RNA sequence: GGGAACGACUCGAGUAGAGUCGAAAAGGUGUUCCAUCCAUGGGAUCGGUGCCGAGUGAGGCUUAUCCCGGGGGUGACGCCUCGGUCCUCCCUUAGCAUCGGAGACCCGGGCCCCCUCCCAGGAAAGUUAACCCAAUCUUCGGAUUGGGUAAAAGAAACAACAACAACAAC
Reactivity to 2A3 in 0.01 (KOAc 150mM, MgCl2 10mM, bicine 150mM(pH8.5), 24C), signal-to-noise 8, nucleotides 027 to 129: g080g030u070g060u120u040c030c020a030u040c030c020a110u190g030g000g020a040u020c050g020g020u040g020c020c010g000a020g010u080g020a030g010g020c060u090u150a150u170c030c010c010g000g000g000g010g000u080g030a040c070g060c020c000u010c010g010g020u050c010c020u030c030c030c010u030u050a020g010c020a040u050c060g050g000a050g070a090c000c000c000g000g000g020c000c000c000c000c000u030c000c000c000a010g030g040a110a060a020g070u150u000a050
Reactivity to DMS in 0.01 (KOAc 150mM, MgCl2 10mM, bicine 150mM(pH8.5), 24C), signal-to-noise 8, nucleotides 027 to 129: g050g020u050g020u040u040c050c020a090u060c010c030a050u040g000g000g050a280u020c080g000g000u000g020c010c000g010a080g000u040g000a090g000g010c300u010u010a030u040c090c010c020g010g000g000g010g000u000g020a140c300g020c000c000u020c160g000g000u000c040c030u030c020c070c040u040u030a110g020c060a070u030c140g000g000a020g000a110c050c030c040g030g000g020c020c020c000c020c000u000c030c010c000a100g000g000a090a080a060g000u020u070a080